[RMDB]
RNA sequence: GGGAACGACUCGAGUAGAGUCGAAAAUUGGAGCCUACUCUACGAUUUAAUGGUGGGGGACAUAUUAACCACUCCCUAUUUUGGGAAAUGCUCGCCCCGAUAGGUCAAGGCGGAGGGGUCCCUCCAACAACUGCACAAAGUUCGCUUUGUGCAGUUGAAAAGAAACAACAACAACAAC
Reactivity to DMS in 0.01 (KOAc 150mM, MgCl2 10mM, bicine 150mM(pH8.5), 24C), signal-to-noise 2, nucleotides 027 to 126: u000u000g010g010a120g000c040c030u000a110c020u010c030u000a040c160g000a070u000u000u000a040a110u000g000g020u010g040g010g000g000g010a060c070a040u000a110u000u020a080a130c170c120a120c180u000c010c000c000u000a100u010u010u030u020g000g000g000a010a050a040u020g000c090u000c060g010c010c000c010c080g000a060u000a010g010g020u000c090a150a150g030g000c090g000g000a060g010g000g000g010u000c040c020c010u020c010c010a040a150
Reactivity to 2A3 in 0.01 (KOAc 150mM, MgCl2 10mM, bicine 150mM(pH8.5), 24C), signal-to-noise 2, nucleotides 027 to 126: u000u000g020g020a010g050c020c000u080a190c020u040c020u020a050c040g030a070u040u060u300a220a120u220g110g050u190g040g010g000g010g050a010c010a000u260a070u200u160a060a040c050c020a070c060u040c010c010c000u050a170u140u160u150u090g000g020g000a040a020a020u080g000c000u010c020g300c020c020c000c000g030a020u030a030g040g030u010c040a050a060g100g030c060g000g020a010g000g000g000g000u040c000c000c000u020c010c000a010a040